Structure probing data (2A3 and DMS) for a 177-nucleotide construct.

RNA sequence: GGGAACGACUCGAGUAGAGUCGAAAAGACGCUGAUGCGAUCGACUGUAAGAUAGAUACAAUGAGAAGACAGAUACGUACGGCAAGUAUCGUCGCCAGAAUUACAGUCGCAAAUUGCCGUACGAAGAAUUUAUAUGCCGCUUCGGCGGCAUAUAAAUAAAAGAAACAACAACAACAAC
Reactivity to 2A3 in 0.01 (KOAc 150mM, MgCl2 10mM, bicine 150mM(pH8.5), 24C), signal-to-noise 3, nucleotides 027 to 126: g040a020c030g030c120u300g050a160u180g020c000g030a050u050c000g010a010c000u030g000u040a060a010g000a140u160a040g140a040u110a120c140a110a050u210g050a150g020a200a010g040a020c030a020g050a060u030a150c020g010u020a010c010g000g000c000a000a060g020u030a010u020c010g000u020c010g080c070c000a100g000a010a010u060u010a020c010a020g000u030c000g000c080a050a120a000u070u030g000c000c000g000u000a000c050g010a020a050g020a030
Reactivity to DMS in 0.01 (KOAc 150mM, MgCl2 10mM, bicine 150mM(pH8.5), 24C), signal-to-noise 2, nucleotides 027 to 126: g020a110c020g000c030u000g000a230u010g000c040g000a150u000c040g020a030c070u000g000u000a040a020g010a120u000a050g000a120u030a040c060a170a100u030g010a040g020a180a060g000a070c090a100g000a130u010a060c000g000u000a010c000g000g000c000a030a070g040u000a040u000c040g000u000c030g000c130c060a240g000a080a130u000u010a020c050a050g000u000c000g000c280a020a030a070u020u000g010c020c010g000u020a000c060g020a150a090g020a100
The DMS profile rests on 2,223 reads.
For DMS the reverse transcriptase was MarathonRT.
The data come from the RNA Mapping Database (RMDB), library OK1LIB.